This 177-nucleotide RNA was probed chemically with 2A3 and DMS. 2A3 adducts were read by reverse transcription with SuperScript II with manganese. The reactions ran in a buffer of 150 mM KOAc, 10 mM MgCl2 and 150 mM bicine (pH 8.5), at 24 C. It was measured as part of the RMDB library M2PK50. Reactivities are given for positions 27 through 126.

RNA sequence: GGGAACGACUCGAGUAGAGUCGAAAAGCAUAACUGUUCGCAGUUAUGCAAAACACGAAGCUGCAAACAGACGCAGUGAAACAAACAAAAGCGAAAACAAAAAAAGCCAACAGUUCGCUGUUGGCAACUUAUAUAGUUGGUUCGCCAACUAUAUAAGAAAAGAAACAACAACAACAAC
Reactivity to 2A3 in 0.01 (KOAc 150mM, MgCl2 10mM, bicine 150mM(pH8.5), 24C), signal-to-noise 3, nucleotides 027 to 126: g010c000a000u010a000a020c000u010g040u060u070c160g000c070a000g000u010u010a000u020g000c000a000a110a010a000c110a000c060g070a090a040g020c010u020g000c030a080a250a170c030a180g140a110c080g000c020a000g000u020g050a110a060a010c080a070a120a010c040a040a160a020a000g050c050g110a090a040a030a050c160a080a200a020a000a000a020a010g000c000c000a010a000c000a000g040u110u110c180g020c110u000g000u010u000g010g000c000a000a000
Reactivity to DMS in 0.01 (KOAc 150mM, MgCl2 10mM, bicine 150mM(pH8.5), 24C), signal-to-noise 4, nucleotides 027 to 126: g000c000a000u000a020a010c000u010g020u010u010c130g020c000a030g000u010u010a000u000g010c000a040a030a080a060c090a060c130g010a170a300g000c010u010g030c050a110a100a170c240a130g010a120c160g020c030a030g040u000g010a080a040a120c110a070a070a090c140a030a060a070a030g000c070g020a020a010a060a120c100a040a030a090a080a060a090a090g020c000c000a000a010c000a010g030u000u010c230g010c000u000g010u000u000g000g000c010a010a010
The 2A3 profile rests on 3,826 reads.
High 2A3 reactivity points to a flexible backbone, as in loops and unpaired stretches.